Record summary: Structure probing data (2A3 and DMS) for a 177-nucleotide construct. The data come from the RNA Mapping Database (RMDB), library OK2TRN.

RNA sequence: GGGAACGACUCGAGUAGAGUCGAAAAGCAACAAUACAGGCUGGGGUCUGGGUUGUAAUAAAAUGUAUGGGGGUGCCCGUAUCCGCUCAGAUCUGCAUCCCGUAAAGGUGCGCUCCCAUUACCGGGCCUAGACAUCGCUAUUCGUAGCGAUGUCUAGAAAAGAAACAACAACAACAAC
Reactivity to 2A3 in 0.01 (KOAc 150mM, MgCl2 10mM, bicine 150mM(pH8.5), 24C), signal-to-noise 1, nucleotides 027 to 126: g000c010a000a100c000a110a050u210a170c030a050g100g000c030u030g040g000g010g020u050c000u000g010g010g010u090u200g090u050a110a080u140a090a160a070a100u190g030u090a040u000g000g000g040g070g000u050g020c010c010c000g000u060a050u090c030c000g000c000u010c000a000g000a030u020c020u010g080c010a020u010c000c000c000g000u040a100a100a040g060g000u070g040c000g000c000u010c030c030c000a000u050u030a030c010c030g060g110g000c010
Reactivity to DMS in 0.01 (KOAc 150mM, MgCl2 10mM, bicine 150mM(pH8.5), 24C), signal-to-noise 1, nucleotides 027 to 126: g010c000a080a110c100a090a160u000a090c120a090g010g010c050u000g020g000g000g020u000c000u010g000g000g020u010u010g010u010a050a070u010a050a040a060a080u000g040u000a010u010g000g010g000g000g020u000g010c020c000c000g000u000a110u010c190c170g000c030u000c030a030g000a050u010c030u010g010c080a110u000c000c000c020g010u030a040a060a220g000g010u000g000c030g000c050u000c010c000c000a020u000u000a060c040c040g000g010g020c130